Structure probing data (2A3 and DMS) for a 177-nucleotide construct. The 2A3 profile rests on 875 reads. The RNA was probed in 150 mM KOAc, 10 mM MgCl2 and 150 mM bicine (pH 8.5) at 24 C. The data come from the RNA Mapping Database (RMDB), library OK1LIB.
RNA sequence: GGGAACGACUCGAGUAGAGUCGAAAAUGAAGUUGGCAAGCAACUAAGGCCAUUGUAUGAAGAGUAUGUGGUCCUAGAAAAUGAGAUGGCAAGAGCCAACAAUUAUGAGGACUACGGGGACUAUUGGCAGCGUCUAAAACUUCGGUUUUAGACGCUGAAAAGAAACAACAACAACAAC
Reactivity to 2A3 in 0.01 (KOAc 150mM, MgCl2 10mM, bicine 150mM(pH8.5), 24C), signal-to-noise 2, nucleotides 027 to 126: u300g020a090a010g000u030u020g030g000c040a040a060g000c010a050a030c050u080a030a040g000g000c000c000a050u040u200g110u020a090u130g040a110a130g020a000g110u170a050u080g010u000g000g030u030c000c000u060a070g110a020a110a010a020u270g030a090g040a130u270g180g000c000a010a000g110a050g170c000c000a010a000c000a010a010u130u090a120u200g170a030g070g000a020c020u040a030c040g000g000g010g000a020c040u010a090u300u210g050g020
Reactivity to DMS in 0.01 (KOAc 150mM, MgCl2 10mM, bicine 150mM(pH8.5), 24C), signal-to-noise 2, nucleotides 027 to 126: u100g050a100a060g000u000u020g010g060c010a070a170g050c120a130a080c010u010a090a080g020g010c000c000a000u010u030g030u030a060u010g040a100a090g020a160g020u010a010u020g010u020g050g030u000c000c010u030a010g030a040a060a100a080u000g030a160g000a060u030g010g000c010a150a120g040a210g000c010c000a010a040c000a030a050u060u010a090u090g030a030g000g000a050c040u000a040c020g000g000g000g000a110c080u030a110u060u030g030g040